[RMDB]
RNA sequence: GGGAACGACUCGAGUAGAGUCGAAAAGGGCGACGAUGCAGCAGGACCGGUGAGAUUCGAGGGUAUCCGGAUCCACUGUGCGCAAAUGGAAGCGCGUUGAAACCCGCAACGGUCCUCGGUUUCGGUCCCGGUAAAUGGAGUUCGCUCCAUUUACCGGAAAAGAAACAACAACAACAAC
Reactivity to 2A3 in 0.01 (KOAc 150mM, MgCl2 10mM, bicine 150mM(pH8.5), 24C), signal-to-noise 3, nucleotides 027 to 126: g020g000g020c030g030a070c040g090a050u150g000c060a050g000c020a000g020g000a030c010c020g030g000u050g000a280g010a010u060u050c040g000a250g060g050g090u160a070u100c040c000g000g020a000u000c010c000a010c000u060g010u080g030c040g000c010a100a040a030u210g060g020a130a100g040c030g000c000g000u000u010g040a090a050a050c010c010c020g040c000a010a010c030g040g000u000c050c020u040c020g020g050u000u040u000c010g020g020u110c000
Structure probing data (2A3) for a 177-nucleotide construct. The 2A3 profile rests on 2,111 reads. The reactions ran in a buffer of 150 mM KOAc, 10 mM MgCl2 and 150 mM bicine (pH 8.5), at 24 C. It was measured as part of the RMDB library OK1LIB.